This 177-nucleotide RNA was probed chemically with DMS and 2A3. Source: RMDB library OK2TRN, as collected in RNAgym. For DMS, 2,505 sequencing reads were counted. For DMS the reverse transcriptase was MarathonRT. 2A3 adducts were read by reverse transcription with SuperScript II with manganese. Reactivities are rounded to 0.1 and cut off at 0 and 3. The RNA was probed in 150 mM KOAc, 10 mM MgCl2 and 150 mM bicine (pH 8.5) at 24 C.
RNA sequence: GGGAACGACUCGAGUAGAGUCGAAAAGUGGACUGCAAGGCUGAGCACAUCCUGCUGUGGAUGUCCAAGGAUGAGAUCUAUGCCAACUGCCACAAGAUGCUGGGCGAGGAUGGCCAGGUCAUCGGGCAUGGUAAGUGGCAUUCGUGCCACUUACCAUAAAAGAAACAACAACAACAAC
Reactivity to DMS in 0.01 (KOAc 150mM, MgCl2 10mM, bicine 150mM(pH8.5), 24C), signal-to-noise 3, nucleotides 027 to 126: g020u000g020g030a090c020u020g020c090a120a140g000g000c010u000g000a100g020c130a090c020a030u010c010c000u000g030c130u000g040u000g010g000a090u010g000u010c070c060a110a110g000g000a070u000g010a090g000a230u000c030u010a070u000g000c020c010a100a100c070u030g000c020c030a060c050a070a090g000a050u000g000c070u000g000g000g000c010g020a110g010g000a070u000g010g000c050c120a030g030g000u020c040a050u000c030g000g000g010c140
Reactivity to 2A3 in 0.01 (KOAc 150mM, MgCl2 10mM, bicine 150mM(pH8.5), 24C), signal-to-noise 2, nucleotides 027 to 126: g000u040g040g000a080c040u040g030c080a110a030g090g000c020u070g030a020g040c010a000c010a050u010c010c010u080g090c110u130g070u110g130g080a080u090g040u050c000c000a040a020g110g010a050u060g030a080g010a050u010c030u100a080u150g000c000c000a010a030c020u070g020c000c000a060c010a040a030g040a040u130g000c040u060g020g030g060c050g150a070g080g110a110u120g030g000c020c010a010g000g020u040c000a020u030c040g000g040g030c020